[RMDB]
RNA sequence: GGGAACGACUCGAGUAGAGUCGAAAAGCUCCUUCAGGUGAACGAUCUCGGUUGUUUCUCUGAAGGCAUGAUCACCCCGUCCGAUGCGGAAGUUCGUGCUUCCGUCGAACGCGUAAGUCGGACGGCGAAAACGAGUUACCGUUCGCGGUAACUCGAACCUUUCGAUAGUAUUCGUACUAUCGAAAGGAAAAGAAACAACAACAACAAC
Reactivity to 2A3 in 0.01 (KOAc 150mM, MgCl2 10mM, bicine 150mM(pH8.5), 24C), signal-to-noise 6, nucleotides 027 to 156: g040c040u030c020c000u000u000c010a040g030g030u120g070a010a000c010g010a030u010c030u100c210g180g000u020u020g010u000u110u030c020u000c000u010g000a000a000g000g000c010a090u120g040a040u100c060a170c010c020c010c000g000u000c010c000g000a010u040g000c000g020g030a040a010g010u120u300c210g140u300g090c020u040u020c020c010g020u020c010g040a110a050c080g020c050g180u120a000a070g000u010c000g000g000a000c000g000g010c050g060a070a060a000a030c010g000a000g000u000u000a000c000c000g010u040u070c260g000c000g080g000u000a000a000c000u000c000g000a010a000
Reactivity to DMS in 0.01 (KOAc 150mM, MgCl2 10mM, bicine 150mM(pH8.5), 24C), signal-to-noise 2, nucleotides 027 to 156: g010c020u000c010c010u000u000c010a040g000g030u000g020a030a020c040g000a030u010c050u000c230g040g030u000u000g020u000u000u000c030u010c010u010g000a050a060g000g010c070a050u010g010a150u010c060a110c040c010c000c000g030u000c000c030g020a030u010g010c020g020g010a020a040g020u000u020c210g000u010g010c020u020u010c030c020g030u000c020g030a100a180c110g000c140g000u010a150a100g050u000c020g000g010a050c030g020g020c080g010a080a050a120a230c030g000a030g000u010u000a000c010c000g050u000u000c230g050c050g020g000u000a010a000c000u000c010g000a010a020
This 207-nucleotide RNA was probed chemically with 2A3 and DMS. Reactivities are given for positions 27 through 156. The DMS profile rests on 4,154 reads.